RNA sequence: GGGAACGACUCGAGUAGAGUCGAAAAUUAGGUUAGCAGUUUUUAUAGUCUGUAAAGUGGAAUUUGAGCUAAUUGAAUGCACAUCAUUCAUAUCAGCGCCGCGUAAACUGGAAUUCCUCCUUUGAUGAUCCGUAUCACGUUUCGACGUGAUACGGAUAAAAGAAACAACAACAACAAC
Reactivity to 2A3 in 0.01 (KOAc 150mM, MgCl2 10mM, bicine 150mM(pH8.5), 24C), signal-to-noise 3, nucleotides 027 to 126: u090u060a010g090g000u070u070a010g000c000a000g000u020u020u010u060u240a250u200a080g110u090c050u050g110u130a000a110a050g020u060g040g070a110a160u150u040u270g030a100g000c060u060a000a160u040u040g000a000a050u030g000c170a040c030a120u270c000a020u090u000c020a020u050a150u190c070a020g000c000g020c060c060g000c010g080u060a050a040a040c000u040g010g040a010a020u000u060c000c000u060c000c010u100u050u030g110a100u060g020
Reactivity to DMS in 0.01 (KOAc 150mM, MgCl2 10mM, bicine 150mM(pH8.5), 24C), signal-to-noise 2, nucleotides 027 to 126: u020u060a120g000g010u000u000a090g000c030a050g000u000u000u000u050u010a080u040a090g010u010c070u010g030u010a030a150a110g020u000g000g010a130a100u000u120u020g000a150g000c010u000a050a050u000u000g000a030a010u020g060c260a260c270a110u080c030a020u000u000c000a060u000a020u060c050a010g030c020g100c020c000g010c080g020u040a060a090a000c100u000g000g000a070a020u000u000c010c020u010c050c000u000u020u020g000a050u000g000

An RNA of 177 nucleotides, treated with 2A3 and DMS and read out base by base. The DMS profile rests on 1,641 reads. The RNA was probed in 150 mM KOAc, 10 mM MgCl2 and 150 mM bicine (pH 8.5) at 24 C. The data come from the RNA Mapping Database (RMDB), library OK1LIB. 2A3 adducts were read by reverse transcription with SuperScript II with manganese.